[RMDB]
RNA sequence: GGGAACGACUCGAGUAGAGUCGAAAACUGAGCGGCCGGGAUGCCGUUGCCAUCGUCUACACCAACACCACGACCACCAGUCCGGUGACCAAGAACAUCCCAGCAUUGAAGUAUCUGUCCUACCGGCAUUGAUACGAGGAUUCGUCCUCGUAUCAAUAAAAGAAACAACAACAACAAC
Reactivity to 2A3 in 0.01 (KOAc 150mM, MgCl2 10mM, bicine 150mM(pH8.5), 24C), signal-to-noise 6, nucleotides 027 to 126: c050u060g020a000g040c020g040g010c020c030g030g060g040a070u110g040c020c010g020u010u050g020c020c010a070u060c040g070u010c030u050a040c040a040c040c030a080a030c020a010c080c010a050c030g050a050c010c010a010c020c020a020g030u030c020c020g020g010u020g010a030c010c000a060a020g030a050a020c020a050u040c000c000c000a010g020c010a050u070u140g040a080a010g040u060a080u060c040u040g030u020c000c010u020a060c030c020g030g010c030
Reactivity to DMS in 0.01 (KOAc 150mM, MgCl2 10mM, bicine 150mM(pH8.5), 24C), signal-to-noise 4, nucleotides 027 to 126: c030u000g000a100g010c050g010g020c020c000g000g050g000a090u010g000c030c010g020u010u020g000c050c030a060u010c070g010u000c010u000a090c090a080c050c020a020a060c080a080c020c020a040c090g010a060c060c010a060c100c060a100g000u000c010c020g010g020u000g000a090c050c040a040a060g000a070a080c120a080u000c020c030c010a100g010c080a100u000u010g010a040a080g000u020a050u020c030u010g000u020c000c020u010a110c060c020g010g000c100
Structure probing data (2A3 and DMS) for a 177-nucleotide construct. For 2A3, 7,541 sequencing reads were counted. It was measured as part of the RMDB library OK1LIB.